Structure probing data (2A3) for a 177-nucleotide construct.

RNA sequence: GGGAACGACUCGAGUAGAGUCGAAAACGUGAACAUCGCUCUGCUAAGUCCCGUCGUUCUUCCAGUCAGAGCGAGAUUGUAAGCAACCUUAUGCGCAAUGAAGACAUAGAGGGACUUCUCAAGGAAGCCGACUCACCUGGUUCGCCAGGUGAGUCGGAAAAGAAACAACAACAACAAC
Reactivity to 2A3 in 0.01 (KOAc 150mM, MgCl2 10mM, bicine 150mM(pH8.5), 24C), signal-to-noise 1, nucleotides 027 to 126: c180g200u030g080a030a000c000a050u000c000g000c000u000c000u000g060c020u020a080a000g060u010c020c000c000g080u030c000g000u000u010c000u090u000c020c000a000g040u120c000a000g000a000g000c010g010a000g000a000u030u030g160u110a040a030g030c000a000a010c020c000u000u060a030u100g000c010g020c040a040a120u150g040a160a100g030a030c000a080u300a050g050a070g000g000g000a000c000u020u090c010u030c020a000a140g030g000a000a000g020

It was measured as part of the RMDB library OK1LIB.
Conditions: 150 mM KOAc, 10 mM MgCl2 and 150 mM bicine (pH 8.5), 24 C.
2A3 adducts were read by reverse transcription with SuperScript II with manganese.